[RMDB]
RNA sequence: GGGAACGACUCGAGUAGAGUCGAAAAUAUACAUCAGAAGUCGGCACAACUCCCGACUCGCGGUGAGCGAUGCAGCGUAGCGCGAGCUACGCAGCUGCUGUGCGGAUGGCUAGCACGCGCUAGCCUAAAUAGGUAUCGCGUUCGCGCGAUACCUAUUAAAAGAAACAACAACAACAAC
Reactivity to 2A3 in 0.01 (KOAc 150mM, MgCl2 10mM, bicine 150mM(pH8.5), 24C), signal-to-noise 2, nucleotides 027 to 126: u130a000u000a000c030a100u080c040a020g050a110a020g110u020c010g110g000c130a030c020a300a100c130u020c050c030c000g020a050c000u000c010g000c030g000g040u080g020a010g000c040g080a080u220g040c010a010g000c000g000u000a000g020c000g040c020g020a030g000c000u000a000c000g000c000a000g000c020u060g000c000u010g020u050g060c000g090g040a070u090g020g000c000u010a000g000c060a050c280g110c050g010c020u020a000g000c000c000u000a000
Reactivity to DMS in 0.01 (KOAc 150mM, MgCl2 10mM, bicine 150mM(pH8.5), 24C), signal-to-noise 2, nucleotides 027 to 126: u050a190u040a190c050a010u000c050a110g020a110a030g010u000c000g020g000c230a070c060a050a180c250u000c140c000c000g000a050c030u000c000g030c300g000g000u020g010a120g000c060g000a080u000g000c010a060g000c030g000u000a010g000c000g000c230g010a140g000c000u000a000c000g010c030a040g050c000u000g000c020u000g000u010g000c030g020g020a090u000g010g050c000u000a000g000c000a190c300g000c200g000c000u010a000g000c000c000u000a000